[RMDB]
An RNA of 177 nucleotides, treated with 2A3 and read out base by base.
RNA sequence: GGGAACGACUCGAGUAGAGUCGAAAACAACAAAAAGCUAAAACGCCAAAGACAUGAAAAGGCGGACAAAAGCCAAGAAGGCUGAUUCAUGUCAAAAACUGCCCGGAAAGAACCGGAAACAAACAAACAUCAGCAAUGACUUCGGUCAUUGCUGAUGAAAAGAAACAACAACAACAAC
Reactivity to 2A3 in 0.01 (KOAc 150mM, MgCl2 10mM, bicine 150mM(pH8.5), 24C), signal-to-noise 1, nucleotides 027 to 126: c030a000a050c000a020a280a050a000a000g070c040u080a050a190a000a010c140g000c040c000a100a020a000g000a010c000a000u000g020a040a000a040a130g000g030c060g000g000a000c050a020a160a050a000g010c070c000a130a090g080a240a090g140g000c020u030g000a000u000u020c000a000u000g000u000c000a000a170a000a000a000c080u190g040c000c000c000g000g030a100a300a020g090a050a000c030c030g090g000a000a270a000c050a040a020a000c010a020a020a020